[RMDB]
An RNA of 177 nucleotides, treated with 2A3 and read out base by base. For 2A3, 423 sequencing reads were counted. Conditions: 150 mM KOAc, 10 mM MgCl2 and 150 mM bicine (pH 8.5), 24 C.
RNA sequence: GGGAACGACUCGAGUAGAGUCGAAAAUUUCGCGAAAACGCAUCGAGCUCGUCGCUGUCAACCUCGACCUCUGCCCUGAUGAAGGGGAAGCGGGCUACGUCAGCGCGUGGCACCAAGGGUUCCGUGCAAUCACGCGGAGCUUCGGCUCCGCGUGAUUAAAAGAAACAACAACAACAAC
Reactivity to 2A3 in 0.01 (KOAc 150mM, MgCl2 10mM, bicine 150mM(pH8.5), 24C), signal-to-noise 1, nucleotides 027 to 126: u040u040u000c130g000c000g210a000a060a170a090c000g050c000a050u010c020g000a000g030c000u020c000g090u130c100g060c010u030g030u060c000a000a070c030c000u100c000g120a220c000c090u040c050u120g150c010c000c000u120g000a130u040g080a180a080g030g000g000g000a040a050g050c050g030g000g010c040u080a040c150g030u040c050a050g000c000g000c000g000u040g000g010c070a000c100c030a190a160g000g000g000u050u040c000c000g000u020g020c080